Conditions: 150 mM KOAc, 10 mM MgCl2 and 150 mM bicine (pH 8.5), 24 C.
The record gives the reactivity of an RNA of 207 nucleotides to 2A3 and DMS.
DMS adducts were read by reverse transcription with MarathonRT.
For DMS, 8,041 sequencing reads were counted.
RNA sequence: GGGAACGACUCGAGUAGAGUCGAAAAGAUCUGCGCCGAUCCGAAACGCUAGCAAACAGCCCGCAUCAUGUCGUCUCCUAACUGCGACGUGGUGAAAUACUGAGCUUAUGCGAGUAAGCCUGUUAGCAAUAGAUCAGAACGUUCGCGUUCUGAUCAAGAGUACUUCAUAGUUCGCUAUGAAGUACUCAAAAGAAACAACAACAACAAC
Reactivity to 2A3 in 0.01 (KOAc 150mM, MgCl2 10mM, bicine 150mM(pH8.5), 24C), signal-to-noise 9, nucleotides 027 to 156: g030a060u020c020u080g030c050g020c050c040g030a060u040c030c040g050a060a050a030c070g000c050u050a010g010c040a080a050a090c030a060g040c010c020c010g020c010a000u000c010a000u010g000u000c010g030u030c040u080c080c060u120a130a120c080u080g000c000g000a000c000g010u000g000g000u010g020a020a030a010u170a030c050u040g030a030g010c000u030u020a010u070g090c050g030a040g060u010a020a000g000c000c020u050g020u070u060a020g010c020a080a170u060a200g000a000u000c000a000g000a000a000c000g010u050u050c170g020c000g100u000u000c020u000g000a000u000c000a000a000
Reactivity to DMS in 0.01 (KOAc 150mM, MgCl2 10mM, bicine 150mM(pH8.5), 24C), signal-to-noise 4, nucleotides 027 to 156: g020a060u000c010u010g040c050g040c050c030g030a090u000c030c050g030a110a070a060c090g010c010u000a040g030c040a040a050a190c130a140g020c020c030c050g020c030a040u000c010a040u000g010u010c010g010u000c080u010c040c040u000a100a070c080u000g000c010g010a040c000g040u000g000g040u000g000a050a050a070u000a130c070u000g000a120g020c020u000u000a160u010g000c180g010a200g020u010a080a090g010c020c040u000g010u010u010a110g060c050a090a160u010a130g000a040u000c000a010g010a010a020c010g040u000u020c290g030c030g020u010u000c000u000g000a010u000c000a030a100